[RMDB]
RNA sequence: GGGAACGACUCGAGUAGAGUCGAAAAUGGUGAUGUAACUACAAUUGAUUCCUCCCAGGGGACUACUGCUGCUAACCAUCUCUUAGUGUUGUUUGGGGCAUCUAAUUUUUCUAAGACUAUUAACCGUGUUAUUGUCGGUUGCUCACGAUCAACAACCCUGAUAGAUGCGAUUCGUCGCAUCUAUCAGAAAAGAAACAACAACAACAAC
Reactivity to DMS in 0.01 (KOAc 150mM, MgCl2 10mM, bicine 150mM(pH8.5), 24C), signal-to-noise 1, nucleotides 027 to 156: u010g010g030u020g030a100u000g040u000a070a100c030u000a070c070a040a140u000u000g000a170u010u000c030c040u000c060c030c070a210g040g020g000g000a090c050u000a050c020u000g010c000u000g030c040u000a130a080c000c010a100u000c030u000c050u000u000a100g010u010g030u010u000g020u000u000u000g020g010g010g060c000a050u000c060u060a030a100u000u000u010u000u000c060u010a100a060g010a100c050u000a080u000u010a070a140c030c070g030u000g020u000u000a030u000u010g000u000c010g000g000u000u000g000c010u000c090a150c050g000a180u000c010a040a010c020a000a050c020c050
Reactivity to 2A3 in 0.01 (KOAc 150mM, MgCl2 10mM, bicine 150mM(pH8.5), 24C), signal-to-noise 2, nucleotides 027 to 156: u080g000g060u060g020a090u140g030u070a130a030c010u110a080c120a170a150u070u110g120a120u170u010c010c020u020c000c070c040a070g000g000g040g000a000c000u040a030c010u070g000c000u010g000c040u060a080a050c030c000a110u060c060u060c010u130u060a060g010u020g020u130u040g050u030u020u070g000g020g000g000c000a000u000c000u030a180a160u140u070u040u100u000c060u060a070a010g040a150c020u030a070u230u150a060a040c080c110g040u040g040u140u110a120u020u070g030u060c000g010g000u010u020g000c020u030c040a090c090g060a100u090c000a000a020c010a010a010c000c030
An RNA of 207 nucleotides, treated with DMS and 2A3 and read out base by base. For 2A3 the reverse transcriptase was SuperScript II with manganese. The RNA was probed in 150 mM KOAc, 10 mM MgCl2 and 150 mM bicine (pH 8.5) at 24 C. The DMS profile rests on 2,711 reads. The 2A3 profile rests on 784 reads. The data come from the RNA Mapping Database (RMDB), library OK3TST. DMS adducts were read by reverse transcription with MarathonRT.